[RMDB]
RNA sequence: GGGAACGACUCGAGUAGAGUCGAAAAACUUUGGCCGACGCAGCUAGGCGGGUGCGCACUGCUGUCUGGCCCGGCGCCGCGCUAGGGCGCACGUUUCGCUCUGCGGAGGGUAACCGGGCUGAAAUAAAGAACUGUCCUUAUUCGUAAGGACAGUUCUAAAAGAAACAACAACAACAAC
Reactivity to 2A3 in 0.01 (KOAc 150mM, MgCl2 10mM, bicine 150mM(pH8.5), 24C), signal-to-noise 1, nucleotides 027 to 126: a000c110u090u050u080g080g000c040c000g030a010c050g000c010a000g000c040u150a030g000g040c090g050g020g000u250g040c050g000c020a040c100u020g000c030u020g070u000c120u100g050g020c000c000c000g000g000c060g000c010c010g000c000g060c050u160a030g010g000g010c000g010c080a000c030g040u080u170u100c020g020c010u000c000u030g020c000g080g010a230g070g000g090u010a120a090c000c010g000g000g000c000u010g020a060a070a020u190a030a150
Reactivity to DMS in 0.01 (KOAc 150mM, MgCl2 10mM, bicine 150mM(pH8.5), 24C), signal-to-noise 2, nucleotides 027 to 126: a110c060u000u010u000g020g000c010c020g010a080c100g000c020a050g010c190u010a110g010g000c030g020g030g020u000g010c070g030c070a110c040u000g000c020u010g010u000c100u010g010g010c020c030c000g020g000c210g000c010c010g020c030g010c030u010a020g000g000g000c000g010c120a030c200g010u010u020u010c040g020c000u000c010u000g000c000g010g000a120g010g000g000u010a080a130c010c000g000g000g000c000u000g000a030a050a080u010a070a110
Chemical mapping of a 177-nucleotide RNA with 2A3 and DMS. Reactivities are given for positions 27 through 126. For DMS the reverse transcriptase was MarathonRT. For 2A3, 1,143 sequencing reads were counted. For DMS, 1,814 sequencing reads were counted. Conditions: 150 mM KOAc, 10 mM MgCl2 and 150 mM bicine (pH 8.5), 24 C.